[RMDB]
RNA sequence: GGGAACGACUCGAGUAGAGUCGAAAAUAAUCCGCUGUCUAUCACCGGUCGCGCUCGCCGCCACGGUCUGCAUACCGAUGCGUCUCACCGCUACGAGCGCGGGGUGGACCCGGCGCUGCAAUAUAAACGAUUAGGUAUGCUUCGGCAUACCUAAUCGAAAAGAAACAACAACAACAAC
Reactivity to DMS in 0.01 (KOAc 150mM, MgCl2 10mM, bicine 150mM(pH8.5), 24C), signal-to-noise 2, nucleotides 027 to 126: u040a070a070u040c050c020g040c090u000g000u000c000u000a090u040c020a030c060c000g000g000u010c040g020c010g020c010u000c020g020c090c100g000c070c090a070c110g000g000u000c030u040g000c100a060u020a150c100c110g010a040u030g010c000g020u020c010u010c040a130c230c100g030c010u000a120c090g010a060g020c010g020c000g000g020g020g010u010g000g000a070c010c060c010g010g000c040g010c010u000g000c060a100a020u020a120u040a080a060a200
Reactivity to 2A3 in 0.01 (KOAc 150mM, MgCl2 10mM, bicine 150mM(pH8.5), 24C), signal-to-noise 5, nucleotides 027 to 126: u170a010a090u070c000c000g030c030u030g030u020c040u040a120u060c010a010c050c020g120g090u090c010g000c000g010c010u000c020g010c020c000g000c020c040a060c030g010g010u000c040u100g050c020a040u070a180c030c060g180a070u030g010c010g070u060c040u060c060a090c060c020g040c060u070a060c080g040a000g000c010g010c010g000g000g000g010u050g020g060a060c000c000c000g050g000c050g020c020u070g010c050a150a030u110a040u100a240a100a020